Structure probing data (2A3) for a 207-nucleotide construct. The RNA was probed in 150 mM KOAc, 10 mM MgCl2 and 150 mM bicine (pH 8.5) at 24 C. The data come from the RNA Mapping Database (RMDB), library M2RFPK.
RNA sequence: GGGAACGACUCGAGUAGAGUCGAAAAGUGCCUCGUCGGGCCGGCAUGCCAACCUGAUCCGAAGUUCAAGGUGGUUUCUCUGGCCUUCCAGAGAGAUGCGCGUCGGAAGAACCGACGAACAAACCUUAAAACAAAACGACGUUCGCGUCGUUUUGAAGUACCCCUUACUCUUCGGAGUAAGGGGUACAAAAGAAACAACAACAACAAC
Reactivity to 2A3 in 0.01 (KOAc 150mM, MgCl2 10mM, bicine 150mM(pH8.5), 24C), signal-to-noise 2, nucleotides 027 to 156: g030u060g050c040c000u020c000g020u000c010g020g000g050c000c000g000g000c020a020u130g030c020c030a100a080c050c010u040g000a020u080c010c030g120a050a030g030u040u070c020a150a000g010g030u040g000g010u040u090u000c020u000c000u030g000g020c030c110u210u060c020c000a020g000a000g020a000g050a070u180g040c060g020c050g090u000c000g000g050a030a030g020a120a130c010c000g000a000c000g020a010a010c020a010a030a100c030c070u200u300a080a040a030a060c010a000a000a000a000c000g010a000c000g020u030u070c200g020c000g080u050c000g000u000u000u000u000g000a010a000